[RMDB]
RNA sequence: GGGAACGACUCGAGUAGAGUCGAAAAAUACUGUAAGCCAAUAAAACAUAACGCCAAAUACAAUAAAUGCUGUGGGAUGUACUUUCUAUGUGAUAUUUUGGCGUUAUUUUGAUUUACCAUUGCACAUCCCACAUGUUAACAGGCUAUACGGUUAUAACGGUCAUUUUAUAUUCGUAUAAAAUGACCGAAAAGAAACAACAACAACAAC
Reactivity to 2A3 in 0.01 (KOAc 150mM, MgCl2 10mM, bicine 150mM(pH8.5), 24C), signal-to-noise 5, nucleotides 027 to 156: a000u060a000c010u000g000u010a010a010g010c000c000a110a070u120a110a130a020a000c040a030u020a010a000c000g000c010c000a020a020a010u160a080c060a080a140u160a210a140a070u200g040c050u020g010u000g010g000g010a000u000g010u040a070c040u070u180u120c060u120a100u200g110u060g110a080u030a110u170u050u030u040g000g000c010g000u010u000a010u000u070u010u060g030a020u010u040u110a090c060c040a070u050u140g070c050a000c000a010u000c000c000c000a000c000a000u010g000u000u050a060a040c040a040g010g000c010u050a060u010a230c010g000g000u080u020a090u040a170a020
Reactivity to DMS in 0.01 (KOAc 150mM, MgCl2 10mM, bicine 150mM(pH8.5), 24C), signal-to-noise 3, nucleotides 027 to 156: a120u000a050c020u000g000u010a040a050g030c000c020a080a160u000a110a090a080a140c140a040u000a020a030c040g040c040c010a030a060a090u010a080c150a060a140u000a080a100a120u000g000c100u000g030u010g010g070g000a050u020g020u000a030c040u000u000u010c120u010a090u020g040u010g030a080u000a090u000u000u010u010g020g010c020g020u000u000a020u020u010u000u010g020a070u000u000u000a050c050c040a100u000u000g020c030a040c030a030u010c000c000c000a050c030a010u000g010u000u010a050a090c080a130g020g020c040u000a170u000a090c030g020g020u000u000a080u010a080a210

Description
An RNA of 207 nucleotides, treated with 2A3 and DMS and read out base by base. The reactions ran in a buffer of 150 mM KOAc, 10 mM MgCl2 and 150 mM bicine (pH 8.5), at 24 C. It was measured as part of the RMDB library OK3TST. Values are in units of 0.01, from 0 to 300, in steps of 10. The DMS profile rests on 5,165 reads.